[RMDB]
RNA sequence: GGGAACGACUCGAGUAGAGUCGAAAAGGUCAUCCUUCACAGGAUCGUGUGCAAGUCCUGCUCGGGGCGGAAGCAUUAAAACCAUUCGAGCUAGUCAAUGCGUGGCGUGUCUCUCCGCAGCGUGUUGUGUAUGAGAGUGGAUUCGUCCACUCUCAAACUGUGAAGUAAGAUUCGUCUUACUUCACAGAAAAGAAACAACAACAACAAC
Reactivity to 2A3 in 0.01 (KOAc 150mM, MgCl2 10mM, bicine 150mM(pH8.5), 24C), signal-to-noise 7, nucleotides 027 to 156: g080g040u120c030a060u050c020c020u120u140c110a070c040a080g030g010a070u070c070g050u090g020u050g120c040a110a050g020u000c000c010u020g010c010u020c040g030g010g030g000c020g020g040a030a000g010c010a020u040u160a050a040a010a040c020c000a030u090u090c080g040a030g070c100u130a050g210u090c020a030a020u050g030c020g060u040g030g000c020g030u040g060u050c040u010c000u020c090c000g010c030a040g030c040g000u020g000u010u000g010u010g040u040a120u110g000a000g000a000g000u000g000g000a010u030u030c080g070u000c020c000a010c000u010c000u010c000a000a000a000
Reactivity to DMS in 0.01 (KOAc 150mM, MgCl2 10mM, bicine 150mM(pH8.5), 24C), signal-to-noise 3, nucleotides 027 to 156: g030g020u000c030a060u000c020c010u000u010c120a080c090a080g000g000a030u000c070g020u000g020u000g030c100a090a120g010u000c020c000u000g020c040u010c030g010g000g020g010c030g050g010a070a180g000c070a120u020u000a060a120a100a090c020c030a150u010u010c060g020a160g000c060u010a100g000u010c050a040a020u000g030c030g010u000g010g040c060g030u000g010u010c040u000c040u000c040c010g020c020a090g000c040g030u000g080u000u000g040u000g010u010a080u000g010a030g100a020g060u000g000g010a080u000u000c300g020u000c000c000a000c000u000c000u010c000a000a010a090